[RMDB]
RNA sequence: GGGAACGACUCGAGUAGAGUCGAAAAGAAAUCGGACAGCAGACGUUCGUUCUGCAAAAGAAAACAUGAGGAGUAUUCAUGAUACUCGAAAGAAAGGGUACUCUAACCGUGCCAGUUAGAAAAGAAAGGGUAUGUAUGACUUCGGUCAUACAUACCCAAAAGAAACAACAACAACAAC
Reactivity to 2A3 in 0.01 (KOAc 150mM, MgCl2 10mM, bicine 150mM(pH8.5), 24C), signal-to-noise 1, nucleotides 027 to 126: g140a020a180a000u140c000g050g000a000c180a040g000c010a000g000a040c000g000u000u190c130g000u060u170c120u000g050c020a160a000a000a000g300a000a070a000a000c000a060u110g160a080g140g000a000g000u090a000u000u130c000a000u220g290a030u110a190c000u000c040g050a080a180a000g060a000a050a000g050g000g000u000a000c000u000c000u000a040a040c000c000g080u020g090c060c000a030g050u070u070a000g200a200a140a290a000g230a040a020a040
Reactivity to DMS in 0.01 (KOAc 150mM, MgCl2 10mM, bicine 150mM(pH8.5), 24C), signal-to-noise 1, nucleotides 027 to 126: g030a060a080a080u060c030g000g020a110c130a050g020c040a000g000a100c000g020u010u010c170g000u140u000c000u000g000c000a120a080a300a140g040a040a000a060a000c150a200u000g000a100g000g000a000g000u000a020u000u000c150a020u010g030a020u030a030c000u040c010g000a160a160a130g000a120a000a170g000g000g010u000a030c110u000c000u000a100a030c120c000g000u000g010c030c040a100g000u000u000a030g000a000a020a090a200g060a050a090a080
An RNA of 177 nucleotides, treated with 2A3 and DMS and read out base by base.
It was measured as part of the RMDB library OK1LIB.
The DMS profile rests on 1,128 reads.
The reactions ran in a buffer of 150 mM KOAc, 10 mM MgCl2 and 150 mM bicine (pH 8.5), at 24 C.